Description:
This 177-nucleotide RNA was probed chemically with DMS and 2A3. For 2A3, 1,194 sequencing reads were counted. It was measured as part of the RMDB library OK2TST. The RNA was probed in 150 mM KOAc, 10 mM MgCl2 and 150 mM bicine (pH 8.5) at 24 C. High DMS reactivity at an A or C suggests that its Watson-Crick edge is free. 2A3 adducts were read by reverse transcription with SuperScript II with manganese.
RNA sequence: GGGAACGACUCGAGUAGAGUCGAAAAAUUGCAAGCAUAUCUGUUAACCUUACUUAAAAACGGAUAGGACGCUAUAGUAGGGUUCCUCGACUAUCAGAUAUCCGUUACUCAGCUAGUGGGAUUGCGAAUCGGGAUACCUAUUCGUAGGUAUCCCGAUAAAAGAAACAACAACAACAAC
Reactivity to DMS in 0.01 (KOAc 150mM, MgCl2 10mM, bicine 150mM(pH8.5), 24C), signal-to-noise 2, nucleotides 027 to 126: a080u000u000g020c060a080a070g010c130a060u010a050u000c030u000g010u010u020a040a040c020c020u000u010a050c010u010u020a040a080a040a090a060c010g010g000a170u000a130g050g020a130c070g020c080u000a060u000a000g030u000a040g020g010g020u010u000c030c040u000c080g020a060c190u030a030u010c060a010g010a090u000a010u000c020c050g000u000u000a090c070u000c080a070g010c070u020a000g000u010g000g020g030a100u010u020g010c060g010a070
Reactivity to 2A3 in 0.01 (KOAc 150mM, MgCl2 10mM, bicine 150mM(pH8.5), 24C), signal-to-noise 1, nucleotides 027 to 126: a020u130u140g010c030a040a050g000c000a020u010a050u050c020u050g000u070u070a030a040c010c000u040u070a020c030u020u030a010a030a010a060a040c000g070g000a080u100a180g240g040a050c080g010c090u050a020u020a110g010u010a000g010g020g000u030u060c000c040u060c040g030a030c040u030a040u050c000a030g000a080u030a010u010c010c000g040u010u030a030c000u050c090a010g010c070u080a020g070u060g070g010g000a090u000u060g030c060g030a070